[RMDB]
RNA sequence: GGGAACGACUCGAGUAGAGUCGAAAAGUUGUAAGGUUCGCCUUACAACAAAAUAAAACAGGCUAGUACCGGCCUGAUAAAGGUACGAAGAUCGAAAGAUCAAAAGACACUUGUUCGCAAGUGUCAACACAGUAACGAUCUUCGGAUCGUUACUGUGAAAAGAAACAACAACAACAAC
Reactivity to DMS in 0.01 (KOAc 150mM, MgCl2 10mM, bicine 150mM(pH8.5), 24C), signal-to-noise 2, nucleotides 027 to 126: g000u000u020g000u000a000a000g000g020u000u000c240g040c000c000u000u000a030c000a000a000c000a010a060a110a080u000a050a080a180a110c200a050g000g020c000u000a090g000u000a010c020c000g010g040c000c000u010g010a030u000a010a070a070g000g030u000a020c000g020a090a090g000a010u000c000g000a140a110a130g010a010u010c000a120a040a090a060g010a020c010a000c000u000u000g010u000u010c200g000c000a010a000g010u000g000u000c020a050a130
Reactivity to 2A3 in 0.01 (KOAc 150mM, MgCl2 10mM, bicine 150mM(pH8.5), 24C), signal-to-noise 2, nucleotides 027 to 126: g000u010u000g000u010a020a000g020g020u010u100c180g130c020c000u010u000a010c000a000a010c000a000a020a000a010u120a000a060a020a030c090a010g000g000c000u030a040g000u000a010c010c010g020g010c010c010u010g000a000u050a020a170a000g000g010u000a010c020g030a160a020g010a020u020c010g010a060a060a040g000a010u000c040a010a070a030a040g000a000c000a000c000u010u000g020u060u090c170g010c080a000a010g000u000g000u020c000a000a010
An RNA of 177 nucleotides, treated with DMS and 2A3 and read out base by base.
Conditions: 150 mM KOAc, 10 mM MgCl2 and 150 mM bicine (pH 8.5), 24 C.